[RMDB]
This 177-nucleotide RNA was probed chemically with DMS and 2A3. DMS adducts were read by reverse transcription with MarathonRT. The reactions ran in a buffer of 150 mM KOAc, 10 mM MgCl2 and 150 mM bicine (pH 8.5), at 24 C. Reactivities are given for positions 27 through 126. It was measured as part of the RMDB library OK1LIB.
RNA sequence: GGGAACGACUCGAGUAGAGUCGAAAAUAAAUUCGGGAUUAUACGAGACAAAGUAAGUCUAGAAGUGGAUCAUGGGUGGGGGAAAGAAGCAUAUGGAGGAUGUACAGUGCUUCCAGUGUUCUACAGGAUCCGGAGGAAUGUUCGCAUUCCUCCGGAUAAAAGAAACAACAACAACAAC
Reactivity to DMS in 0.01 (KOAc 150mM, MgCl2 10mM, bicine 150mM(pH8.5), 24C), signal-to-noise 2, nucleotides 027 to 126: u000a030a080a020u020u010c040g000g020g000a120u060u000a070u040a110c150g010a070g060a000c100a020a080a130g020u060a070a090g000u000c000u010a100g000a110a050g000u020g000g000a060u030c160a120u000g000g020g030u010g000g080g000g010g030a010a100a020g010a030a030g000c000a000u040a070u010g040g000a050g050g000a140u020g000u020a140c070a050g020u000g010c030u000u000c000c120a020g030u010g000u000u000c040u000a060c240a050g000g010
Reactivity to 2A3 in 0.01 (KOAc 150mM, MgCl2 10mM, bicine 150mM(pH8.5), 24C), signal-to-noise 2, nucleotides 027 to 126: u240a000a060a000u010u020c020g060g010g010a010u100u230a040u110a230c080g010a010g020a060c020a020a020a020g080u070a050a000g030u080c040u020a010g010a120a030g100u190g090g000a070u210c030a150u150g000g000g000u240g010g000g000g000g080a020a010a000g020a000a000g000c050a080u060a300u050g000g000a040g100g000a050u120g120u120a120c010a040g030u020g060c000u050u020c000c000a000g000u000g020u120u060c030u020a030c000a080g150g090